[RMDB]
RNA sequence: GGGAACGACUCGAGUAGAGUCGAAAAAGGAGUUUUUUGGUGCUAGUUACCGAAAGUUUACUGCGUACGACCGUGACCUCAGUCAUGCCGCCUGUAGAAAGCACCUGUAUCAGGUGGAGUUCUACAGCGUGCUGCAGUGUUUCGACACUGCAGCACGAAAAGAAACAACAACAACAAC
Reactivity to DMS in 0.01 (KOAc 150mM, MgCl2 10mM, bicine 150mM(pH8.5), 24C), signal-to-noise 2, nucleotides 027 to 126: a080g010g010a090g010u010u000u000u010u010u010g010g010u010g010c100u000a140g020u000u000a010c020c000g000a030a010a090g010u000u000u010a080c040u000g000c100g000u010a130c080g000a070c060c020g010u010g000a090c140c050u000c090a050g010u020c040a040u020g010c010c030g000c220c000u020g010u000a000g000a020a030a060g020c010a010c000c000u000g010u000a150u010c070a030g000g020u000g000g010a100g000u000u000c000u000a000c010a040g000
Reactivity to 2A3 in 0.01 (KOAc 150mM, MgCl2 10mM, bicine 150mM(pH8.5), 24C), signal-to-noise 2, nucleotides 027 to 126: a000g060g010a030g000u000u030u000u030u080u140g070g000u030g040c080u140a070g070u260u080a040c020c000g010a000a040a020g000u050u120u080a160c030u040g060c060g020u070a090c050g040a040c040c010g060u040g030a040c020c040u040c010a010g040u010c020a030u120g110c030c020g010c050c000u000g020u000a000g000a000a000a000g110c010a010c000c000u010g090u130a240u250c060a050g040g000u000g060g020a180g040u000u010c000u000a010c000a020g020